Annotation:
Source: RMDB library OK2TRN, as collected in RNAgym. Structure probing data (DMS) for a 177-nucleotide construct. For DMS the reverse transcriptase was MarathonRT. The RNA was probed in 150 mM KOAc, 10 mM MgCl2 and 150 mM bicine (pH 8.5) at 24 C.
RNA sequence: GGGAACGACUCGAGUAGAGUCGAAAACUGAGGGUUUAAAGGGCAGGAGAGAGCAAACACUAUGUUUCAUGGAUUCCACCCGUGAAUUUACCUACAAUAAGUGAAAUCCUGGAAUCUUGCAUAGACAAACAGGGUACCUGUUCGCAGGUACCCUGUUAAAAGAAACAACAACAACAAC
Reactivity to DMS in 0.01 (KOAc 150mM, MgCl2 10mM, bicine 150mM(pH8.5), 24C), signal-to-noise 1, nucleotides 027 to 126: c140u000g030a100g020g040g000u010u010u000a050a120a070g080g000g010c130a060g000g000a140g000a080g010a080g010c090a090a130a060c230a030c060u000a040u000g000u010u010u000c080a080u010g030g000a020u000u000c010c010a080c180c150c210g000u010g010a080a040u000u000u000a160c050c020u000a050c180a060a120u000a070a060g030u000g000a010a030a040u000c000c050u000g000g000a040a060u000c040u000u000g000c080a090u000a040g010a110c200a060